RNA sequence: GGGAACGACUCGAGUAGAGUCGAAAACUCAGAAUCCAGCGAGAGGCGUAGGAGAGAGGGCCGCGGUGCUCUGGAGUAGAGGCUUCUAGCUUCGAAACACCAUCGAUCGUCCCUGCUUCUUUUACCUUCUCCUGGCUCUUCGAGUGAGACGCGACCGCCCAACAUUUGAGUUCGCUCAAAUGUUGGGAAAAGAAACAACAACAACAAC
Reactivity to 2A3 in 0.01 (KOAc 150mM, MgCl2 10mM, bicine 150mM(pH8.5), 24C), signal-to-noise 2, nucleotides 027 to 156: c000u020c010a040g020a020a040u300c010c000a070g020c100g050a000g000a000g020g000c200g050u010a010g000g040a000g010a000g000a000g010g020g000c010c020g030c000g000g000u000g000c010u000c000u020g000g000a000g010u000a010g000a000g000g020c030u300u150c220u300a040g000c010u030u000c000g020a010a010a010c010a010c100c000a000u030c000g040a300u040c000g000u000c000c000c000u020g140c030u090u170c000u000u010u010u000a000c000c000u000u000c000u000c000c000u000g000g000c010u010c020u010u010c010g000a020g020u010g020a040g020a010c050g000c050g160a090c000c030g010
Conditions: 150 mM KOAc, 10 mM MgCl2 and 150 mM bicine (pH 8.5), 24 C. Chemical mapping of a 207-nucleotide RNA with 2A3. Values are in units of 0.01, from 0 to 300, in steps of 10. Values cover nucleotides 27 to 156. For 2A3, 1,302 sequencing reads were counted.